[RMDB]
RNA sequence: GGGAACGACUCGAGUAGAGUCGAAAAGAUAUGGAUCUACCUCUUCCAGGCACUCGUUGAAAUCGGAAACGAUGGAGAGUGCUGGAAUGUAGAUCCUAAGUCAAAGGAUAAUCUUCGGAUUAUCCAACUCGAAGAUCUAGUUCGCUAGAUCUUCGAGAAAAGAAACAACAACAACAAC
Reactivity to DMS in 0.01 (KOAc 150mM, MgCl2 10mM, bicine 150mM(pH8.5), 24C), signal-to-noise 1, nucleotides 027 to 126: g000a030u000a300u000g000g010a000u000c000u000a000c000c010u020c010u010u000c000c000a000g040g000c000a010c000u000c000g020u000u000g010a130a140a010u000c000g000g010a190a160a170c000g030a000u000g010g030a100g000a030g020u000g000c000u000g000g000a090a000u010g000u000a000g000a000u000c000c000u000a000a050g010u000c020a090a220a090g000g000a020u000a010a010u010c000u000u030c230g020g000a010u010u010a000u000c010c000a020a050
Reactivity to 2A3 in 0.01 (KOAc 150mM, MgCl2 10mM, bicine 150mM(pH8.5), 24C), signal-to-noise 1, nucleotides 027 to 126: g060a000u100a030u150g020g020a010u000c010u000a030c000c000u000c000u010u000c020c000a060g300g110c010a020c000u010c000g260u300u080g000a010a010a000u010c020g020g050a120a040a020c000g000a000u010g000g020a010g000a010g000u030g000c020u000g000g000a010a010u090g020u000a000g000a010u020c000c000u000a050a010g000u040c040a140a070a000g030g000a000u030a010a000u030c030u110u140c300g130g000a000u010u000a000u000c000c020a000a020
The record gives the reactivity of an RNA of 177 nucleotides to DMS and 2A3. It was measured as part of the RMDB library TTRDEL. Values cover nucleotides 27 to 126.